Structure probing data (2A3) for a 177-nucleotide construct. It was measured as part of the RMDB library OK1LIB.

[RMDB]
RNA sequence: GGGAACGACUCGAGUAGAGUCGAAAACUGGUCAUCAUCUCCUCAAGCGAGAGCAGAAAGACUUGGAGCACGUUUCAGCAUCAAAAGCGCGCGAGAAAGCGUGAUUUCCGACGCCCUUCGUGAGCUUGGUGGGAUUAUGGUUCGCCAUAAUCCCACCAAAAGAAACAACAACAACAAC
Reactivity to 2A3 in 0.01 (KOAc 150mM, MgCl2 10mM, bicine 150mM(pH8.5), 24C), signal-to-noise 2, nucleotides 027 to 126: c050u040g010g020u060c000a060u000c000a100u020c120u000c000c020u200c140a050a070g000c100g070a040g030a060g040c040a020g140a010a090a000g020a020c000u060u020g120g000a050g000c070a030c100g000u000u050u000c050a010g020c020a080u020c060a070a160a120a000g100c060g000c000g000c010g060a020g050a060a090a010g010c000g000u020g070a170u080u050u020c010c010g010a000c010g020c020c000c000u020u010c030g080u020g000a000g010c000u020u010